[RMDB]
RNA sequence: GGGAACGACUCGAGUAGAGUCGAAAAAGCAUCGCUACGGCGAUGCAAAUGGCUGCCGUGAGCGGCUAAGACGCCGUCGGCCAGGCGCUGCCUGUAACCGCCAUGUGGCGAAUGCUGCAUGGCGGAAGAACCAUGAUGCAUUCGUGCAUCAUGGUUCAAAAGAAACAACAACAACAAC
Reactivity to 2A3 in 0.01 (KOAc 150mM, MgCl2 10mM, bicine 150mM(pH8.5), 24C), signal-to-noise 5, nucleotides 027 to 126: a000g000c000a010u000c000g000c010u040a040c300g110g010c010g000a000u010g000c000a000a000a030u050g010g000c020u020g000c010c000g090u100g100a070g030c000g010g000c010u040a160a070g080a050c090g000c010c000g080u190c030g010g050c030c020a030g010g000c100g060c170u130g010c000c030u090g040u100a080a100c000c000g000c000c000a000u010g000u010g000g000c040g170a210a130u300g000c000u000g010c000a000u000g000g000c000g000g000a010a010
Reactivity to DMS in 0.01 (KOAc 150mM, MgCl2 10mM, bicine 150mM(pH8.5), 24C), signal-to-noise 2, nucleotides 027 to 126: a040g000c010a000u000c010g010c000u000a080c210g040g000c010g020a010u000g000c010a000a040a030u010g000g000c010u010g000c000c020g000u040g050a240g000c020g000g010c000u000a060a070g050a160c180g010c030c000g020u010c010g000g020c080c040a120g000g000c050g000c160u010g010c030c010u000g020u040a070a190c000c020g000c000c000a000u010g000u000g000g000c010g000a100a070u080g010c000u000g000c000a000u000g000g020c000g000g000a010a010

The record gives the reactivity of an RNA of 177 nucleotides to 2A3 and DMS. The RNA was probed in 150 mM KOAc, 10 mM MgCl2 and 150 mM bicine (pH 8.5) at 24 C. DMS adducts were read by reverse transcription with MarathonRT.